An RNA of 207 nucleotides, treated with 2A3 and DMS and read out base by base. The RNA was probed in 150 mM KOAc, 10 mM MgCl2 and 150 mM bicine (pH 8.5) at 24 C. For 2A3, 731 sequencing reads were counted. For 2A3 the reverse transcriptase was SuperScript II with manganese. The DMS profile rests on 5,596 reads. It was measured as part of the RMDB library OK3TST.

[RMDB]
RNA sequence: GGGAACGACUCGAGUAGAGUCGAAAAAGGUUAUGCUAGUGUUUCCAGUUUUGUUUUCAGUUUUUACUUUUUUACUUUUCCCUGAAUAAGCUAUGGCUGGAAUCAUCCAAAGAUGCAUUGUUUGAAGUAGGAUGGCAGAGGAAUAGGUAUGACAGAAAUACCAUUGAUCUUUCGAGAUCAAUGGUAUAAAAGAAACAACAACAACAAC
Reactivity to 2A3 in 0.01 (KOAc 150mM, MgCl2 10mM, bicine 150mM(pH8.5), 24C), signal-to-noise 2, nucleotides 027 to 156: a030g080g010u070u020a040u160g040c030u030a020g050u030g040u030u000u080c010c030a000g010u050u060u110u040g080u060u050u050u060c080a080g020u070u040u090u100u130a140c110u200u090u040u090u050u070a140c060u100u120u040u100c040c000c000u020g050a040a050u100a130a030g010c080u110a040u250g050g000c000u000g000g030a000a010u020c020a020u030c030c060a100a040a060g060a070u070g010c020a020u020u110g020u130u060u050g020a000a010g040u040a010g000g020a010u000g020g000c030a040g020a040g000g010a010a110u080a090g030g010u130a050u160g050a030c010a020g230a090a100
Reactivity to DMS in 0.01 (KOAc 150mM, MgCl2 10mM, bicine 150mM(pH8.5), 24C), signal-to-noise 2, nucleotides 027 to 156: a050g010g000u010u000a060u000g000c000u010a080g020u000g010u000u000u000c020c020a130g020u000u000u000u000g020u010u010u010u010c030a070g010u000u000u010u000u000a020c020u000u000u010u000u010u020a110c090u000u010u000u000c010c050c030u000g000a070a060u010a050a100g030c040u010a090u000g020g020c000u000g020g020a040a060u010c040a050u000c090c050a070a080a130g020a100u000g000c030a070u000u020g000u000u000u010g010a040a080g030u010a060g010g010a010u010g000g030c030a070g020a090g000g010a070a070u000a040g020g010u000a070u010g010a100c050a100g010a060a130